[RMDB]
RNA sequence: GGGAACGACUCGAGUAGAGUCGAAAAGAUAUGGACCUCCAGAGCUUUUGACGAAAUGCACAUCGGAAACGAUGUGAAAUUUCGAUAAGCUCGGAGGUCCUAAGUCAAACACCAGUUCGCUGGUGAAGAUUUACUCAAUGUUCGCAUUGAGUAAAUCAAAAGAAACAACAACAACAAC
Reactivity to DMS in 0.01 (KOAc 150mM, MgCl2 10mM, bicine 150mM(pH8.5), 24C), signal-to-noise 5, nucleotides 027 to 126: g000a060u000a300u000g010g000a010c000c000u000c000c000a220g010a010g020c010u000u000u010u000g010a260c130g000a000a010a010u000g000c000a000c000a010u000c010g000g000a120a110a210c000g010a020u000g000u000g000a030a060a010u000u000u000c000g000a160u000a020a020g010c000u000c000g010g000a010g000g010u000c000c000u000a000a050g010u000c020a170a130a230c010a010c010c000a020g010u000u010c300g030c010u000g010g010u000g010a100a110
Reactivity to 2A3 in 0.01 (KOAc 150mM, MgCl2 10mM, bicine 150mM(pH8.5), 24C), signal-to-noise 3, nucleotides 027 to 126: g010a000u080a020u090g020g000a000c000c020u000c010c100a190g020a010g000c040u090u150u240u300g270a180c110g020a000a000a000u030g000c000a010c000a010u010c010g030g000a030a050a040c010g010a000u010g000u000g000a070a020a000u010u000u000c000g040a060u030a190a010g010c000u000c000g000g010a000g000g000u000c000c010u000a010a000g010u000c010a020a020a010c020a010c010c000a010g010u090u090c300g010c230u030g000g010u020g000a030a020